[RMDB]
RNA sequence: GGGAACGACUCGAGUAGAGUCGAAAACGCCGCUGCUGAUCGUCGCGGGCGCGGGUUCGGGUAAGACCGCGGUGUUGACCCGCCGCAUUGCCUAUCUGAUGGCGGCCCGCGGCGUCGGGGUGGGCCACCGCCCUACGUAGUUCGCUACGUAGGGCGGAAAAGAAACAACAACAACAAC
Reactivity to 2A3 in 0.01 (KOAc 150mM, MgCl2 10mM, bicine 150mM(pH8.5), 24C), signal-to-noise 1, nucleotides 027 to 126: c030g040c000c020g040c030u300g060c050u040g190a120u240c050g040u010c000g000c010g000g000g000c040g040c000g010g110g000u150u300c000g010g000g050u030a170a100g030a060c020c030g140c200g110g010u170g010u040u090g050a060c010c020c000g020c000c000g000c020a030u140u250g000c010c020u090a110u180c050u150g100a120u140g100g030c040g060g100c030c020c000g010c010g000g000c000g010u000c000g010g040g000g000u050g000g110g000c000c010a010

An RNA of 177 nucleotides, treated with 2A3 and read out base by base.
For 2A3 the reverse transcriptase was SuperScript II with manganese.
Reactivities are rounded to 0.1 and cut off at 0 and 3.
The data come from the RNA Mapping Database (RMDB), library OK2TRN.
For 2A3, 1,106 sequencing reads were counted.